[RMDB]
Annotation: Chemical mapping of a 177-nucleotide RNA with DMS and 2A3. DMS adducts were read by reverse transcription with MarathonRT. Conditions: 150 mM KOAc, 10 mM MgCl2 and 150 mM bicine (pH 8.5), 24 C. The data come from the RNA Mapping Database (RMDB), library OK1LIB.
RNA sequence: GGGAACGACUCGAGUAGAGUCGAAAAUGUGGUGGAAAGUGUCAUGGCAUCCUUGCUACUCCCCACUGGAGGAAUGUGCCUUCAGCUCAGGCCUCAAUAUGAAAAAUACUCUUUCCAACAGAGAAUGGCUUUUAUUAGGAUUCGUCCUAAUAAAAGCAAAAGAAACAACAACAACAAC
Reactivity to DMS in 0.01 (KOAc 150mM, MgCl2 10mM, bicine 150mM(pH8.5), 24C), signal-to-noise 4, nucleotides 027 to 126: u030g000u010g010g020u040g000g000a020a040a030g000u030g000u000c110a070u010g000g020c030a080u010c110c060u000u020g000c030u010a070c100u000c020c010c010c070a170c130u030g020g010a050g000g000a070a070u000g000u010g000c000c020u040u030c150a090g000c060u020c050a060g000g000c020c020u010c040a060a130u030a100u020g000a030a080a050a100a080u020a080c020u000c000u010u000u020c040c060a060a030c100a060g000a070g000a100a120u010g010
Reactivity to 2A3 in 0.01 (KOAc 150mM, MgCl2 10mM, bicine 150mM(pH8.5), 24C), signal-to-noise 9, nucleotides 027 to 126: u190g020u050g020g040u060g020g040a110a070a040g050u050g050u130c070a090u080g040g020c020a060u100c040c030u050u040g030c010u040a060c030u040c020c000c000c000a020c030u020g030g010a010g010g030a100a140u160g040u110g150c010c000u040u070c030a020g010c020u040c050a030g010g050c020c000u040c030a070a080u190a100u210g160a060a030a020a010a020u150a070c010u000c000u020u030u020c030c020a050a040c040a060g060a000g060a110a120u170g090